RNA sequence: GGGAACGACUCGAGUAGAGUCGAAAAGCUCCUUUGCGCUUUGUUUUCGGAUUAGGCGUGGAGGCGAAAGUCACCCUCCUCGCAUCGCAAGUUCGUGCUUGCGACUUACACGUAGGGCGAGGGGUGGAAAACAGUAUGGGAUUCGUCCCAUACUGAACUAACUUACUAGUUUCGACUAGUAAGUUAGAAAAGAAACAACAACAACAAC
Reactivity to DMS in 0.01 (KOAc 150mM, MgCl2 10mM, bicine 150mM(pH8.5), 24C), signal-to-noise 5, nucleotides 027 to 156: g010c050u000c010c010u000u000u000g000c010g010c010u010u000u000g010u000u000u000u010c250g030g000a090u000u000a030g010g030c010g040u000g000g000a020g000g030c060g000a070a080a120g000u000c030a080c000c000c000u000c010c000u000c020g020c250a080u000c020g000c020a010a020g010u000u010c260g030u010g020c000u000u000g010c010g000a030c070u000u000a120c100a080c080g020u000a070g010g010g000c040g020a050g000g000g000g010u010g030g000a050a080a080a200c020a000g010u000a010u000g000g020g020a100u000u000c300g000u000c000c000c000a010u000a000c000u000g010a030a140
Reactivity to 2A3 in 0.01 (KOAc 150mM, MgCl2 10mM, bicine 150mM(pH8.5), 24C), signal-to-noise 6, nucleotides 027 to 156: g040c030u050c010c000u000u010u030g000c020g000c000u030u020u060g050u050u050u040u110c220g130g020a050u060u060a020g020g000c010g000u010g010g000a010g010g000c060g070a140a070a010g120u110c040a060c030c010c000u020c000c000u000c000g010c020a020u010c000g000c000a010a010g010u170u300c170g170u300g100c000u010u010g000c000g000a010c000u040u100a050c110a020c110g200u160a090g050g080g000c000g000a010g010g010g000g010u170g020g050a060a080a020a020c000a000g000u000a000u000g000g000g010a010u030u100c140g060u010c050c000c000a000u000a000c000u000g000a010a010